[RMDB]
RNA sequence: GGGAACGACUCGAGUAGAGUCGAAAAUCUAGUCUAUUCGUAGACUAGAAAAGACUGCAGCCGGCAGGGUUGACUGCGCCGAGCAGAAACGGCAAAGGAAAAAAACUCUUGCUUUCGAGCAAGAGAAGUGUGAAUAUGCAUUCGUGCAUAUUCACACAAAAGAAACAACAACAACAAC
Reactivity to DMS in 0.01 (KOAc 150mM, MgCl2 10mM, bicine 150mM(pH8.5), 24C), signal-to-noise 1, nucleotides 027 to 126: u020c000u000a010g000u010c000u000a080u000u040c090g000u000a020g000a030c000u000a010g000a030a050a150a160g000a150c030u000g020c080a120g030c040c000g010g030c000a020g000g010g020u000u000g000a280c000u000g000c190g010c070c050g010a210g010c040a060g010a040a110a190c000g000g010c050a080a100a140g030g000a000a000a060a030a060a070a170c000u000c000u000u000g010c000u000u000u000c040g030a020g020c000a000a010g000a000g000a010a070
The data come from the RNA Mapping Database (RMDB), library M2PK50. Structure probing data (DMS) for a 177-nucleotide construct. The DMS profile rests on 696 reads. For DMS the reverse transcriptase was MarathonRT. Conditions: 150 mM KOAc, 10 mM MgCl2 and 150 mM bicine (pH 8.5), 24 C.